An RNA of 177 nucleotides, treated with DMS and 2A3 and read out base by base.

RNA sequence: GGGAACGACUCGAGUAGAGUCGAAAAAGCGUAGAAGCUAGGAGGCGGCAGCUGGCUGGAAGUUUAUGGGCUAGCUCCCAGGUCAGCAGAGGUUGUCGUGUCCGGCUAGCAGUGAGCAGGCUGUGAGGGGGCGGGCGUGGUUCGCCAUGUUUGCCCCAAAAGAAACAACAACAACAAC
Reactivity to DMS in 0.01 (KOAc 150mM, MgCl2 10mM, bicine 150mM(pH8.5), 24C), signal-to-noise 9, nucleotides 027 to 126: a070g010c050g010u020a070g000a120a060g010c010u000a070g030g010a050g010g010c010g000g010c000a040g010c010u000g000g000c000u000g000g010a050a070g010u020u030u040a100u020g010g000g010c060u030a120g020c140u020c000c000c000a030g000g010u010c010a010g010c010a100g010a190g010g000u010u000g010u010c010g020u000g000u000c010c020g000g000c010u000a050g010c030a070g000u010g000a080g010c060a160g010g000c010u010g010u010g000a110g010
Reactivity to 2A3 in 0.01 (KOAc 150mM, MgCl2 10mM, bicine 150mM(pH8.5), 24C), signal-to-noise 9, nucleotides 027 to 126: a000g060c040g010u070a050g060a230a010g030c040u150a290g020g010a020g050g000c000g000g000c010a010g000c010u030g020g010c000u010g010g020a070a050g050u070u120u160a170u100g020g010g010c050u090a060g010c040u120c000c010c000a020g010g050u050c010a010g000c010a010g030a040g160g020u030u010g010u010c010g000u010g210u010c000c000g000g000c000u020a010g010c010a010g010u030g050a050g040c050a030g090g000c010u010g020u030g080a110g010
2A3 adducts were read by reverse transcription with SuperScript II with manganese.
For DMS the reverse transcriptase was MarathonRT.